[RMDB]
RNA sequence: GGGAACGACUCGAGUAGAGUCGAAAAGACUGGCAGGCACGGUACCGUUCAAGCCAGAGUACCUCUACCAUAGUGCAUUAGCUUUUUUUUUUUUAGCUAAUGCGCGCCUGCGAAGGUAGAAAAUAGAGGGAAGCCUUUACUUCGGUGGAGGCUUCCCAAAAGAAACAACAACAACAAC
Reactivity to DMS in 0.01 (KOAc 150mM, MgCl2 10mM, bicine 150mM(pH8.5), 24C), signal-to-noise 5, nucleotides 027 to 126: g000a060c000u000g000g010c010a070g000g010c190a060c010g020g010u040a090c160c020g000u000u010c060a060a060g000c030c010a020g000a100g000u010a110c020c000u000c020u000a010c010c030a090u030a130g000u000g020c000a010u000u000a000g000c000u000u010u000u010u000u000u000u020u010u030u100u010a020g000c000u000a000a010u000g010c010g020c000g010c090c040u020g010c130g010a150a100g010g010u000a010g010a060a040a060a070u030a060g010a300
Reactivity to 2A3 in 0.01 (KOAc 150mM, MgCl2 10mM, bicine 150mM(pH8.5), 24C), signal-to-noise 7, nucleotides 027 to 126: g090a040c000u010g010g000c020a050g060g020c070a020c100g090g080u210a160c140c050g020u040u100c110a110a030g000c010c010a000g000a010g020u040a070c000c000u020c010u020a010c010c010a060u090a100g010u010g000c000a000u010u000a010g000c000u060u070u080u020u020u010u010u020u010u010u000u110a000g000c000u000a000a000u000g000c000g000c000g010c000c020u140g030c070g050a090a020g000g010u020a000g090a040a060a010a010u190a040g100a110